Chemical mapping of a 207-nucleotide RNA with 2A3 and DMS. For DMS the reverse transcriptase was MarathonRT. The DMS profile rests on 4,015 reads. It was measured as part of the RMDB library OK3TST.
[RMDB]
RNA sequence: GGGAACGACUCGAGUAGAGUCGAAAAUGUUUCCAGCCAUGUCCCUGCGGGGGUUCAUGUUAUGCAACACUACAAUCACCGAGUACCCGGUGCACUUGGGGAAUUUAUCUAGGAGUUUGGAGGGAAAAGCAUGGAAAAAUUUGGCCACUCCUUUGUGGUAUACUACUCUGUUCGCAGAGUAGUAUACAAAAGAAACAACAACAACAAC
Reactivity to 2A3 in 0.01 (KOAc 150mM, MgCl2 10mM, bicine 150mM(pH8.5), 24C), signal-to-noise 2, nucleotides 027 to 156: u070g000u020u010u000c010c010a020g040c000c000a020u020g020u000c010c010c000u000g060c250g030g010g000g000g000u050u080c020a020u060g010u040u110a090u180g010c040a110a050c040a070c070u180a070c070a180a070u300c000a040c030c000g040a030g120u120a100c010c010c010g040g000u060g040c020a020c090u020u000g000g000g000g030a040a080u070u180u030a080u130c050u060a020g050g000a040g040u020u150u160g030g040a050g000g000g000a040a110a050a020g030c040a040u070g050g060a020a020a090a060a110u090u100u070g010g000c030c030a000c040u050c000c000u030u060u080g190u060g070
Reactivity to DMS in 0.01 (KOAc 150mM, MgCl2 10mM, bicine 150mM(pH8.5), 24C), signal-to-noise 2, nucleotides 027 to 156: u010g010u010u000u000c010c020a190g020c060c020a070u010g000u010c020c020c000u000g030c170g070g000g020g000g000u000u010c070a070u000g010u000u000a140u000g020c030a070a070c020a090c050u010a050c040a100a110u010c050a110c010c000g010a070g070u010a090c030c040c070g050g050u010g000c030a030c050u010u000g050g000g010g020a070a060u000u000u000a100u030c060u000a040g020g030a080g030u000u010u000g000g020a080g020g030g000a060a050a050a160g010c030a050u010g000g000a010a060a050a080a180u000u000u000g020g000c030c050a070c060u000c010c050u010u000u000g020u000g000